[RMDB]
RNA sequence: GGGAACGACUCGAGUAGAGUCGAAAAUCAGAAUGAGGCCGGAGUGUUUAGCGCUCCGUAAACACGGUCGUACAUCCAGCCGGUAGCCUGGUUCCUUGCAUUGAGUGAUGUACGGAGUUUAUAGAGCAAAAGAAAGACCUGUUCGCAGGUCUUUCAACUAUCUUCGUCUCUUCGGAGACGAAGAUAGAAAAGAAACAACAACAACAAC
Reactivity to 2A3 in 0.01 (KOAc 150mM, MgCl2 10mM, bicine 150mM(pH8.5), 24C), signal-to-noise 1, nucleotides 027 to 156: u080c010a020g110a100a140u090g040a060g030g090c000c030g000g010a050g040u050g030u040u090u260a190g060c050g000c000u050c000c000g000u020a020a030a000c030a010c060g060g130u100c060g000u030a030c000a010u050c050c070a010g000c000c020g010g060u080a030g070c000c000u050g030g010u040u110c020c010u040u160g030c050a090u070u180g030a090g020u190g010a010u000g000u000a000c000g000g010a050g040u060u110u000a180u040a020g060a010g040c040a080a060a080a060g050a000a000a010g000a000c000c000u010g050u070u060c170g000c100a000g000g000u000c000u000u000u000c000a000a000